Description:
An RNA of 177 nucleotides, treated with DMS and 2A3 and read out base by base. The reactions ran in a buffer of 150 mM KOAc, 10 mM MgCl2 and 150 mM bicine (pH 8.5), at 24 C. The DMS profile rests on 11,661 reads. Values cover nucleotides 27 to 126.
RNA sequence: GGGAACGACUCGAGUAGAGUCGAAAACCUGGUUUAUUCGUAAACCAGGAUAGGCCGUAGCGCGGUGGUCCCACCUGACCCCAUCCCGAACUCAGAAGUGAAUAUUCCAGACCUUCGGGUCUGGAAACCAUGUUAGAUGAUUCGUCAUCUAACAUGGAAAAGAAACAACAACAACAAC
Reactivity to DMS in 0.01 (KOAc 150mM, MgCl2 10mM, bicine 150mM(pH8.5), 24C), signal-to-noise 7, nucleotides 027 to 126: c000c000u000g000g000u000u000u000a020u000u010c160g020u000a000a010a010c010c010a010g010g010a070u000a050g010g000c010c020g020u000a100g010c090g010c040g000g020u000g010g000u000c020c010c020a100c060c040u000g000a120c040c010c010c020a140u000c010c020c020g000a080a090c150u000c060a080g010a100a110g000u000g000a080a110u000a160u000u000c000c000a010g000a020c000c000u000u010c220g020g010g010u000c000u000g000g000a000a010a080
Reactivity to 2A3 in 0.01 (KOAc 150mM, MgCl2 10mM, bicine 150mM(pH8.5), 24C), signal-to-noise 5, nucleotides 027 to 126: c000c000u010g000g000u010u020u020a080u040u060c160g040u030a010a010a000c000c010a000g000g000a030u100a050g080g000c020c020g060u060a040g030c080g000c010g070g050u040g010g040u040c020c010c000a020c000c020u040g050a060c010c000c000c000a040u040c000c010c020g060a060a040c040u040c080a070g040a200a020g140u100g110a100a050u110a140u150u000c000c000a010g010a010c000c000u040u120c220g050g000g000u000c000u000g000g000a000a000a000